[RMDB]
RNA sequence: GGGAACGACUCGAGUAGAGUCGAAAAGAUAUGGAUGACAGGGAGCGAGUUGAUCGGAAACGAUCAACUCGCAUCGAUCUGUAUCCUAAGUCAAAGACCAUUCAGUGCUUCGGCACUGAAUGGUCAACUCAAAAAGAAGGUUCGCCUUCUUUUUGAGAAAAGAAACAACAACAACAAC
Reactivity to 2A3 in 0.01 (KOAc 150mM, MgCl2 10mM, bicine 150mM(pH8.5), 24C), signal-to-noise 2, nucleotides 027 to 126: g020a010u070a040u180g010g010a000u030g230a050c000a000g010g030g000a040g020c010g000a010g010u010u000g010a000u000c010g010g020a040a040a050c000g000a000u030c000a020a010c010u000c000g020c010a020u000c000g000a010u010c000u000g010u020a000u010c000c000u030a210a080g060u020c030a090a080a130g010a010c000c010a000u010u020c010a010g010u000g020c000u070u240c300g110g000c010a000c010u000g010a010a000u000g000g010u000c000a000a000
Reactivity to DMS in 0.01 (KOAc 150mM, MgCl2 10mM, bicine 150mM(pH8.5), 24C), signal-to-noise 3, nucleotides 027 to 126: g000a030u000a300u010g000g010a020u010g010a040c020a030g000g000g010a040g020c010g020a010g000u010u000g000a010u000c000g010g000a110a060a170c010g020a010u000c000a020a000c000u000c010g010c050a030u000c100g010a050u020c010u000g010u000a030u000c000c010u010a060a150g000u000c040a090a120a150g000a010c000c000a010u000u000c000a010g020u000g020c000u000u010c270g030g010c000a000c000u000g000a000a000u000g000g010u000c000a000a040

The record gives the reactivity of an RNA of 177 nucleotides to 2A3 and DMS. For DMS the reverse transcriptase was MarathonRT. In probing experiments dimethyl sulfate is read out at A N1 and C N3, which are open when not base-paired. Reactivities are given for positions 27 through 126.